This 177-nucleotide RNA was probed chemically with 2A3 and DMS. The RNA was probed in 150 mM KOAc, 10 mM MgCl2 and 150 mM bicine (pH 8.5) at 24 C. 2A3 adducts were read by reverse transcription with SuperScript II with manganese.
RNA sequence: GGGAACGACUCGAGUAGAGUCGAAAACGGUGCUUUUCUGCUCCCCUGCACUCGGUUUUGCAGGGUAGCCUGGCAGGACACACAGCAUCCCCCUCUCAGUUUAGGAGAGCCGUCCUAAGAAUGGGGCAUGAACUCUCAAGUUCGCUUGAGAGUUCAUAAAAGAAACAACAACAACAAC
Reactivity to 2A3 in 0.01 (KOAc 150mM, MgCl2 10mM, bicine 150mM(pH8.5), 24C), signal-to-noise 5, nucleotides 027 to 126: c050g020g000u010g000c020u070u020u050u010c010u030g000c000u060c000c000c010c000u020g000c000a030c040u170c150g220g020u090u100u150u070g000c000a000g020g000g000u020a040g060c010c040u070g080g020c010a020g020g020a010c030a010c000a000c020a090g030c000a050u010c000c010c000c000c000u000c000u010c010a210g080u140u120u130a120g070g010a030g000a000g000c020c020g060u020c010c000u050a080a060g110a130a100u160g000g000g020g000c000
Reactivity to DMS in 0.01 (KOAc 150mM, MgCl2 10mM, bicine 150mM(pH8.5), 24C), signal-to-noise 4, nucleotides 027 to 126: c100g020g010u010g020c090u000u000u010u000c010u000g000c020u010c080c000c010c030u000g000c010a040c110u020c170g010g020u020u040u010u000g000c000a050g000g000g030u010a030g000c190c120u040g000g030c020a020g020g010a020c300a150c140a080c070a040g000c080a020u000c000c010c010c040c030u030c020u000c030a060g030u000u020u010a110g010g000a020g010a120g020c090c090g000u000c000c000u000a100a120g020a110a130u010g000g000g000g010c220

Values cover nucleotides 27 to 126. 2A3 is a SHAPE reagent: it acylates the 2'-hydroxyl of flexible nucleotides of all four kinds.